[RMDB]
RNA sequence: GGGAACGACUCGAGUAGAGUCGAAAAUUAGCCCAGACUUUUGAGAGUAGUGAUGACCUCUCAGCCCCUCCACCUUGGGGUGCCCUAUCCGAGCACUGCUGUUUCGGUAGAAAGGCUAAGCACGUCGCUAUAAGUACCUGUUCGCAGGUACUUAUAGAAAAGAAACAACAACAACAAC
Reactivity to DMS in 0.01 (KOAc 150mM, MgCl2 10mM, bicine 150mM(pH8.5), 24C), signal-to-noise 7, nucleotides 027 to 126: u010u010a140g000c010c000c000a200g000a110c110u000u000u010u000g000a010g000a040g000u000a070g010u010g010a110u010g000a140c260c000u000c000u000c010a030g000c010c000c000c000u010c150c130a110c180c120u000u000g010g000g010g020u000g000c010c010c010u000a100u000c020c020g010a010g000c030a040c250u010g010c170u000g010u000u000u000c010g000g000u000a020g010a050a100a120g000g000c030u000a030a090g000c140a060c160g010u000c140g010
Reactivity to 2A3 in 0.01 (KOAc 150mM, MgCl2 10mM, bicine 150mM(pH8.5), 24C), signal-to-noise 6, nucleotides 027 to 126: u090u030a040g040c030c010c000a070g090a190c070u120u070u070u020g010a010g000a010g020u130a010g070u060g170a130u120g070a070c010c000u020c000u000c000a000g000c000c000c000c000u050c050c040a120c020c030u030u060g000g010g010g000u010g000c000c010c000u020a020u000c010c000g010a000g010c030a040c160u280g080c080u030g130u110u300u040c010g010g000u000a010g030a020a030a000g010g000c020u030a040a000g040c030a020c110g150u080c050g010